[RMDB]
RNA sequence: GGGAACGACUCGAGUAGAGUCGAAAAGACCUUCAGUUCGCUGAAGGUCGAUGAUGGUAAGAGAGAUUACCAUCUGUUAAGUGAUAUGGAUAAGAUCACUCAGUGAACGUGCUUUCGAGCACGUUAAUAUAGCAAUCUCUUUCGAGAGAUUGCUAUAAAAAGAAACAACAACAACAAC
Reactivity to DMS in 0.01 (KOAc 150mM, MgCl2 10mM, bicine 150mM(pH8.5), 24C), signal-to-noise 4, nucleotides 027 to 126: g000a010c000c000u000u000c000a010g010u000u010c230g040c000u000g010a000a010g000g020u000c000g010a010u010g000a020u000g000g010u000a010a020g010a250g000a190g000a180u000u000a000c000c010a000u000c000u000g000u010u010a090a040g010u000g000a020u000a030u000g000g020a120u000a100a080g000a030u000c010a010c000u000c200a090g030u020g010a040a010c000g000u000g010c010u000u000u010c170g010a030g000c000a010c010g000u000u000a020a120
Reactivity to 2A3 in 0.01 (KOAc 150mM, MgCl2 10mM, bicine 150mM(pH8.5), 24C), signal-to-noise 3, nucleotides 027 to 126: g000a010c020c000u020u000c000a040g020u030u150c180g020c070u000g000a000a000g000g010u000c000g010a000u010g000a000u010g000g000u030a020a020g090a030g010a000g020a180u000u010a000c000c000a010u000c000u010g190u140u200a100a030g000u000g010a010u010a030u110g240g050a110u080a230a080g020a010u020c010a020c020u090c070a120g090u110g200a020a000c000g010u010g010c010u070u070u160c270g080a010g020c000a010c030g000u000u000a000a010

Source: RMDB library M2PK50, as collected in RNAgym. The record gives the reactivity of an RNA of 177 nucleotides to DMS and 2A3. For 2A3, 2,818 sequencing reads were counted. Conditions: 150 mM KOAc, 10 mM MgCl2 and 150 mM bicine (pH 8.5), 24 C. DMS (dimethyl sulfate) methylates the pairing face of unpaired adenines and cytosines. Reactivities are given for positions 27 through 126. As a SHAPE reagent, 2A3 marks flexible, mostly unpaired nucleotides at the ribose 2'-OH.